[RMDB]
RNA sequence: GGGAACGACUCGAGUAGAGUCGAAAAUGCUCUUUGGGGAACAGUGACUUUGGGCUGCAUUCCAGGUAGCUCCCUGAUGCUGAACGGUGGCCGGCAGGUGCUCCAGCUUCCUGGCAUCCUGGCCCAAAGGUACCGAUGACUUCGGUCAUCGGUACCUAAAAGAAACAACAACAACAAC
Reactivity to DMS in 0.01 (KOAc 150mM, MgCl2 10mM, bicine 150mM(pH8.5), 24C), signal-to-noise 1, nucleotides 027 to 126: u000g000c050u010c030u000u000u000g010g010g000g030a030a120c230a090g030u000g000a160c050u000u020u000g010g010g040c010u000g000c300a040u020u040c010c040a050g010g000u010a010g000c040u010c060c050c010u000g000a090u010g000c020u000g010a100a110c150g000g040u000g030g000c090c060g050g010c100a040g030g000u020g020c300u000c130c040a060g010c070u010u000c030c000u000g000g020c080a000u030c140c050u040g010g000c030c000c030a050a040
Background:
This 177-nucleotide RNA was probed chemically with DMS. For DMS the reverse transcriptase was MarathonRT. The reactions ran in a buffer of 150 mM KOAc, 10 mM MgCl2 and 150 mM bicine (pH 8.5), at 24 C.